[RMDB]
RNA sequence: GGGAACGACUCGAGUAGAGUCGAAAAGCAUGUUUAUGUGAACCUAAGCAUGAAUGUCAGUGACUGUAGAUUAGAAGAACUGAUUAUAGCAUCGGCUGCUUGGUGUUCACUUUAUUUGCAUCUGUGAGUUUCCAACAAGCCCUAAGUUUACUGACAACGCUGAUUAAAUCUUCGGAUUUAAUCAGCGAAAAGAAACAACAACAACAAC
Reactivity to 2A3 in 0.01 (KOAc 150mM, MgCl2 10mM, bicine 150mM(pH8.5), 24C), signal-to-noise 3, nucleotides 027 to 156: g010c010a020u050g040u040u130u070a110u180g020u010g020a000a020c010c010u000a010a000g000c010a050u140g070a250a080u100g080u030c010a010g040u030g100a270c030u050g040u140a060g030a300u140u120a030g070a240a020g030a120a060c020u000g020a020u040u090a060u040a050g050c040a030u060c060g090g070c050u020g010c000u020u010g010g010u090g000u070u000c000a000c000u010u050u000a040u020u030u070g010c000a010u030c050u040g040u030g080a050g030u030u050u070c030c000a010a030c040a070a020g010c000c000c000u040a120a040g020u000u030u160a150c020u060g070a030c050a090a000
Chemical mapping of a 207-nucleotide RNA with 2A3. Conditions: 150 mM KOAc, 10 mM MgCl2 and 150 mM bicine (pH 8.5), 24 C. It was measured as part of the RMDB library OK3TST. For 2A3, 1,204 sequencing reads were counted.